[RMDB]
RNA sequence: GGGAACGACUCGAGUAGAGUCGAAAAUAAUUGCGAUAACGAACGAGACCUUAACCUGCUAAAUAGCCCGGUCCGCUUUGGCGGGCCGCUGGCUUCUUAGAGGGACUAUCGGCUCAAGCCGAUGGAAGCUCAUAAGUGUUUUCGAACACUUAUGAGCAAAAGAAACAACAACAACAAC
Reactivity to 2A3 in 0.01 (KOAc 150mM, MgCl2 10mM, bicine 150mM(pH8.5), 24C), signal-to-noise 7, nucleotides 027 to 126: u180a010a080u090u140g040c060g040a030u080a200a120c060g020a070a010c050g010a040g050a110c000c000u010u010a060a070c000c010u100g180c000u110a020a040a070u050a040g010c000c000c010g000g000u000c000c000g030c050u190u110u270g150g000c000g000g000g010c010c010g000c000u020g000g000c000u000u000c000u000u010a010g000a010g010g010g010a010c000u020a000u000c000g010g020c050u060c230a070a050g000c000c000g000a000u000g030g020a070a020
Reactivity to DMS in 0.01 (KOAc 150mM, MgCl2 10mM, bicine 150mM(pH8.5), 24C), signal-to-noise 3, nucleotides 027 to 126: u000a080a050u010u010g010c060g020a140u020a060a050c080g000a070a050c070g010a100g000a130c030c050u000u020a070a160c010c000u010g020c000u010a010a030a050u000a020g030c010c000c000g000g020u000c010c010g000c010u010u030u080g010g020c010g010g000g010c000c010g010c060u010g000g000c010u000u000c060u020u000a020g000a050g010g000g010a220c020u000a010u000c000g000g000c010u030c220a150a120g020c010c000g000a000u000g010g010a130a200
An RNA of 177 nucleotides, treated with 2A3 and DMS and read out base by base. DMS adducts were read by reverse transcription with MarathonRT. The data come from the RNA Mapping Database (RMDB), libraries RFM100 and RFMREP. The RNA was probed in 150 mM KOAc, 10 mM MgCl2 and 150 mM bicine (pH 8.5) at 24 C.